[RMDB]
RNA sequence: GGGAACGACUCGAGUAGAGUCGAAAACUUUCACCUUCACCGGUAGUAGAUAAGGUUCACGUUAACUCCUUCCGAAAACUGGUAACUGGGGACGUUUCCUAUGACAACCCUAUUAAAUCUGCUUCAGGUGCUAUAUCUACUUCGGUAGAUAUAGCACAAAAGAAACAACAACAACAAC
Reactivity to DMS in 0.01 (KOAc 150mM, MgCl2 10mM, bicine 150mM(pH8.5), 24C), signal-to-noise 2, nucleotides 027 to 126: c080u010u000u010c050a050c030c020u000u010c210a020c080c040g020g000u000a060g030u000a050g000a060u000a070a060g010g000u000u000c060a080c170g050u000u030a050a210c070u010c010c010u000u000c050c010g020a100a090a080a090c050u000g010g010u000a050a070c180u000g000g030g000g030a100c180g020u000u000u020c020c010u020a060u030g020a100c100a070a170c040c000c050u010a100u000u020a000a110a060u020c060u010g000c010u000u000c070a100g040
Reactivity to 2A3 in 0.01 (KOAc 150mM, MgCl2 10mM, bicine 150mM(pH8.5), 24C), signal-to-noise 2, nucleotides 027 to 126: c000u070u150u060c050a110c050c000u070u130c030a010c030c040g090g000u010a030g010u020a010g020a080u040a030a060g050g010u010u040c120a090c150g020u060u120a070a070c040u020c000c000u030u060c020c020g060a040a080a070a130c030u040g020g010u050a060a010c060u070g000g010g010g030a000c010g000u000u030u050c000c030u090a140u120g010a020c030a030a070c030c000c020u000a050u080u160a110a120a060u050c070u120g010c000u100u060c020a020g140

Source: RMDB library OK2TST, as collected in RNAgym. Chemical mapping of a 177-nucleotide RNA with DMS and 2A3. 2A3 adducts were read by reverse transcription with SuperScript II with manganese. Values are in units of 0.01, from 0 to 300, in steps of 10. For DMS the reverse transcriptase was MarathonRT. The reactions ran in a buffer of 150 mM KOAc, 10 mM MgCl2 and 150 mM bicine (pH 8.5), at 24 C. High DMS reactivity at an A or C suggests that its Watson-Crick edge is free.